RNA sequence: GGGAACGACUCGAGUAGAGUCGAAAACAUUCCAGGUAGCUCCCUGAUGCUGAACGGUGGCCGGCAGGUGCUCCAGCUUCCUGGCAUCCUGGCCCAAGCACACCUGGGGGCCGUGAGCCACAGGUGCCGAUUGGAGUGACUUCGGUCACUCCAAUCGAAAAGAAACAACAACAACAAC
Reactivity to DMS in 0.01 (KOAc 150mM, MgCl2 10mM, bicine 150mM(pH8.5), 24C), signal-to-noise 2, nucleotides 027 to 126: c180a170u010u000c020c010a070g010g000u000a080g010c040u000c030c040c020u010g020a100u000g000c040u000g020a110a110c160g030g000u010g030g040c040c040g020g010c120a070g020g020u000g020c140u010c070c060a040g010c080u010u000c030c040u010g000g020c060a030u000c030c040u010g000g020c030c010c060a080a120g010c160a180c000a040c000c020u000g000g010g000g000g000c020c050g010u040g000a090g020c000c010a070c070a040g010g020u000g040c090
Reactivity to 2A3 in 0.01 (KOAc 150mM, MgCl2 10mM, bicine 150mM(pH8.5), 24C), signal-to-noise 1, nucleotides 027 to 126: c020a130u170u000c040c000a020g020g060u030a030g000c020u030c010c030c000u000g050a050u050g030c020u060g050a140a090c070g010g100u090g020g040c010c000g070g010c050a030g000g080u090g030c040u060c020c010a000g000c020u040u070c000c010u000g040g000c010a040u010c020c000u030g050g020c000c010c000a060a030g100c020a010c000a000c040c010u070g090g060g090g030g070c020c020g180u130g020a040g000c020c000a020c010a000g020g000u020g090c070
Description
An RNA of 177 nucleotides, treated with DMS and 2A3 and read out base by base. Source: RMDB library OK2TRN, as collected in RNAgym. In probing experiments dimethyl sulfate is read out at A N1 and C N3, which are open when not base-paired. DMS adducts were read by reverse transcription with MarathonRT. The RNA was probed in 150 mM KOAc, 10 mM MgCl2 and 150 mM bicine (pH 8.5) at 24 C.